The record gives the reactivity of an RNA of 177 nucleotides to 2A3 and DMS. The DMS profile rests on 1,717 reads.
RNA sequence: GGGAACGACUCGAGUAGAGUCGAAAAUACUCAUGGGAAGUCGGCACAACUCCCGACUCGCGGGGAGGGCCGCAGUGUAGCUUUUUCGUCGGAGCUGUUGUGCGGACGUCGAGUAACAGCUAGCCAACAUAGUCGCCAAAUUCGUUUGGCGACUAUGAAAAGAAACAACAACAACAAC
Reactivity to 2A3 in 0.01 (KOAc 150mM, MgCl2 10mM, bicine 150mM(pH8.5), 24C), signal-to-noise 1, nucleotides 027 to 126: u070a000c010u000c060a080u050g100g050g000a170a120g000u040c050g060g020c050a010c020a180a030c020u040c030c030c000g020a070c000u020c070g080c000g100g000g030g010a180g000g110g050c000c000g000c010a000g050u070g060u070a020g000c050u010u040u000u040u060c010g060u000c020g010g000a110g000c090u100g040u070u020g050u010g000c030g000g020a000c020g000u060c010g020a000g000u000a000a110c000a000g100c000u110a080g020c000c000a020a000
Reactivity to DMS in 0.01 (KOAc 150mM, MgCl2 10mM, bicine 150mM(pH8.5), 24C), signal-to-noise 1, nucleotides 027 to 126: u030a050c010u000c000a110u000g020g020g010a110a080g010u000c010g000g020c000a090c030a060a050c000u010c020c010c010g020a060c000u030c190g000c120g000g000g020g010a040g030g000g020c000c020g000c030a030g000u000g000u010a050g000c010u000u010u000u050u020c110g010u000c140g030g000a110g000c030u020g010u000u010g020u000g020c010g000g000a000c050g000u000c020g000a030g000u010a050a080c130a070g000c130u010a070g000c030c110a070a270